[RMDB]
RNA sequence: GGGAACGACUCGAGUAGAGUCGAAAAUGAGUGACUGGAGGGGAAAAGGAAAGCGAGAAAGAAACAUCGAAUAACGUCCUCAUACUAAGUUUGCUUGUAUUUUGUAGCAUAUUUGGAUUCUGCGUUUCACUGAUAAUAGCUUCGGCUAUUAUCAGUGAAAAGAAACAACAACAACAAC
Reactivity to 2A3 in 0.01 (KOAc 150mM, MgCl2 10mM, bicine 150mM(pH8.5), 24C), signal-to-noise 1, nucleotides 027 to 126: u150g000a020g010u100g020a040c020u010g030g000a060g000g020g020g000a050a050a000a000g050g000a120a030a000g020c080g040a000g120a010a130a020g140a000a110a010c030a100u130c000g030a090a070u110a060a010c010g020u020c030c000u060c010a040u080a080c000u020a040a000g060u090u060u040g050c000u040u070g050u050a160u170u190u040u110g100u030a020g020c000a000u000a070u170u070u030g000g030a060u020u080c020u110g000c020g010u000u000u050